Structure probing data (2A3 and DMS) for a 177-nucleotide construct. The DMS profile rests on 2,467 reads.
RNA sequence: GGGAACGACUCGAGUAGAGUCGAAAAUUUUCAUUGAACAUUGUGUCUCUGAGGGGUUACAUGAUUCACUCAAGAUCACACAGCUACAGUGGUCCAUCUGAAGCUGUAUUUCAUGUCCUCUGAAUUAAGGGCACUAAUUAUUCGUAAUUAGUGCCCUAAAAGAAACAACAACAACAAC
Reactivity to 2A3 in 0.01 (KOAc 150mM, MgCl2 10mM, bicine 150mM(pH8.5), 24C), signal-to-noise 1, nucleotides 027 to 126: u060u020u000u040c020a040u020u110g000a000a000c000a020u010u090g020u020g000u000c000u000c000u080g040a010g060g020g000g000u020u120a040c030a090u220g000a020u070u020c030a070c150u040c020a050a010g010a100u100c000a060c010a000c010a030g070c010u090a090c000a000g040u030g130g130u140c100c000a090u040c010u010g010a020a010g010c030u000g010u030a040u030u090u060c030a020u020g010u000c000c000u000c040u090g030a050a050u170u100a100
Reactivity to DMS in 0.01 (KOAc 150mM, MgCl2 10mM, bicine 150mM(pH8.5), 24C), signal-to-noise 2, nucleotides 027 to 126: u000u010u000u000c010a040u000u000g000a040a030c050a060u010u010g060u000g010u000c050u010c170u010g000a030g000g000g020g010u000u000a090c270a110u010g000a010u000u000c020a110c050u010c050a060a040g000a030u010c090a040c080a040c030a010g000c030u010a070c040a010g040u010g010g010u010c140c090a120u010c020u000g000a110a010g010c010u000g000u000a040u000u010u020c090a020u000g000u000c020c020u000c030u000g000a040a050u000u000a090

It was measured as part of the RMDB library OK2TST.